An RNA of 177 nucleotides, treated with 2A3 and DMS and read out base by base. For 2A3 the reverse transcriptase was SuperScript II with manganese. The DMS profile rests on 5,684 reads. For 2A3, 7,690 sequencing reads were counted.

[RMDB]
RNA sequence: GGGAACGACUCGAGUAGAGUCGAAAAGAUAUGGAUCCUAUUUGUAGUCGGUGGUCGGAAACGACCAUCCGACGCAGAUAAAUAGGGAUCCUAAGUCAAAAGAAUCGUAGCUUCGGCUACGAUUCAACAAUUAGUUGAGCUUCGGCUCAACUAAUUGAAAAGAAACAACAACAACAAC
Reactivity to 2A3 in 0.01 (KOAc 150mM, MgCl2 10mM, bicine 150mM(pH8.5), 24C), signal-to-noise 2, nucleotides 027 to 126: g010a000u010a000u030g010g010a010u010c010c010u000a030u000u010u000g210u080a130g000u010c000g020g010u010g010g020u000c000g000g010a010a010a010c000g000a010c000c020a020u040c010c030g000a000c000g000c000a060g010a120u030a020a030a010u070a030g260g030g040a010u000c000c000u000a000a000g010u010c030a030a040a030a260g010a010a000u000c000g000u010a000g010c000u080u060c300g150g020c020u020a000c000g000a000u000u000c000a000a000
Reactivity to DMS in 0.01 (KOAc 150mM, MgCl2 10mM, bicine 150mM(pH8.5), 24C), signal-to-noise 3, nucleotides 027 to 126: g010a030u000a020u010g000g000a020u010c000c000u000a010u000u000u000g030u010a060g020u000c000g020g040u000g000g000u000c010g020g000a010a010a030c000g020a010c010c010a010u020c020c000g030a000c000g030c300a080g010a080u000a020a010a000u000a020g010g030g020a020u000c000c000u000a000a100g020u000c010a120a090a160a150g000a020a000u000c000g000u000a010g010c000u000u010c280g040g010c000u010a000c000g010a000u000u000c000a140a190